[RMDB]
RNA sequence: GGGAACGACUCGAGUAGAGUCGAAAAGUGUUAAGAUGCUUACUCCUAAAACUGGUACAGGUAUAGCUAUAUCUGUUAAACCAGAGAGUACAGCUGAUCAAGAGACUUAUGGUGGAGCUUCAGUGUGCAUGUCAUCCAACUUCGGUUGGAUGACAUGAAAAGAAACAACAACAACAAC
Reactivity to DMS in 0.01 (KOAc 150mM, MgCl2 10mM, bicine 150mM(pH8.5), 24C), signal-to-noise 1, nucleotides 027 to 126: g040u010g040u000u020a080a260g020a050u000g000c000u000u000a040c030u000c010c300u030a070a080a170a270c010u010g010g000u000a010c010a000g010g000u000a000u000a120g050c140u000a080u020a000u000c000u010g000u010u010a020a110a010c010c000a010g030a110g010a020g000u000a000c240a000g010c010u000g020a080u000c040a020a150g010a090g000a040c040u000u000a080u000g010g030u000g030g020a090g030c040u010u000c030a070g010u010g030u020g010